[RMDB]
RNA sequence: GGGAACGACUCGAGUAGAGUCGAAAACCAAGUUCAGUUAACAGACAAAUACUGCAGUGUUAAUGUAGUAGCUUGGCUUUACGCAGCAAUACUUAAUGGUUGCGCUUGGUUUGUAAAACCUAAUCGCGCACCCUUUUUAGUUCGCUAAAAAGGGUGCAAAAGAAACAACAACAACAAC
Reactivity to 2A3 in 0.01 (KOAc 150mM, MgCl2 10mM, bicine 150mM(pH8.5), 24C), signal-to-noise 4, nucleotides 027 to 126: c010c000a000a000g020u030u100c090a040g010u070u070a040a030c030a110g010a000c010a000a010a010u010a010c020u010g010c010a040g040u020g040u300u220a170a160u030g000u020a020g000u000a000g060c120u010u020g000g000c000u030u040u010a000c030g000c040a030g000c000a020a050u080a290c060u110u240a140a050u210g060g020u020u010g010c000g000c000u010u000g000g020u000u000u030g070u060a050a030a000a030c000c000u030a060a070u080c050g000c010
Reactivity to DMS in 0.01 (KOAc 150mM, MgCl2 10mM, bicine 150mM(pH8.5), 24C), signal-to-noise 3, nucleotides 027 to 126: c000c000a010a010g010u000u000c210a130g010u000u010a020a030c220a030g010a020c040a010a050a090u010a010c010u000g000c010a030g000u010g030u010u010a090a110u010g020u000a010g010u000a000g010c220u000u010g000g000c020u000u010u000a010c030g000c180a030g030c030a040a030u000a130c120u000u020a090a080u000g010g020u000u000g000c010g010c020u000u000g000g000u020u000u000g010u010a060a070a100a130c000c010u000a080a080u020c160g000c210
Chemical mapping of a 177-nucleotide RNA with 2A3 and DMS. For 2A3, 3,092 sequencing reads were counted. The RNA was probed in 150 mM KOAc, 10 mM MgCl2 and 150 mM bicine (pH 8.5) at 24 C.